RNA sequence: GGGAACGACUCGAGUAGAGUCGAAAAUCUGUGUCACAGCUUUCCGUCCAUUUAACUCUUGAUCUGUUUUCUGGAAGUGCUCAAAAUCGCAGUAGGCUCUCAAAGCUGGAACUUGAGAUGCAUCUUUGGCUUAAAUUACAAGUGAAAUAGAAUGUAGUGUCUGAUUUAAAUUCGUUUAAAUCAGACAAAAAGAAACAACAACAACAAC
Reactivity to 2A3 in 0.01 (KOAc 150mM, MgCl2 10mM, bicine 150mM(pH8.5), 24C), signal-to-noise 4, nucleotides 027 to 156: u030c020u010g030u010g070u100c060a020c010a070g020c030u030u050u040c020c040g050u000c020c020a060u070u080u090a120a080c050u040c030u100u140g080a090u080c040u090g040u030u060u030u010c020u020g030g050a060a070g010u020g040c010u010c070a060a070a090a150u080c040g000c030a000g010u030a050g040g040c010u010c000u000c040a060a080a020g030c040u060g020g030a020a020c000u020u000g000a020g030a070u060g010c010a040u030c060u020u050u080g030g000c020u060u090a030a110a110u140u100a070c030a060a030g060u030g060a040a040a050u130a060g090a060a060u290g040u220a040g070
Reactivity to DMS in 0.01 (KOAc 150mM, MgCl2 10mM, bicine 150mM(pH8.5), 24C), signal-to-noise 3, nucleotides 027 to 156: u000c040u020g030u000g020u000c080a110c040a130g020c060u000u000u000c020c040g020u000c020c030a080u010u010u000a070a070c030u000c040u010u020g000a130u000c020u000g010u010u000u000u010c050u010g020g010a060a120g020u000g010c010u000c030a050a040a100a140u010c060g060c030a090g000u010a080g020g010c020u000c040u010c060a050a040a090g030c020u010g020g030a070a090c060u000u010g000a100g000a130u000g030c040a060u010c030u000u000u010g010g020c040u000u000a040a050a090u000u000a080c100a080a090g010u000g010a040a070a120u010a120g010a060a100u010g020u000a130g020
The record gives the reactivity of an RNA of 207 nucleotides to 2A3 and DMS. 2A3 adducts were read by reverse transcription with SuperScript II with manganese. High DMS reactivity at an A or C suggests that its Watson-Crick edge is free. The 2A3 profile rests on 2,458 reads.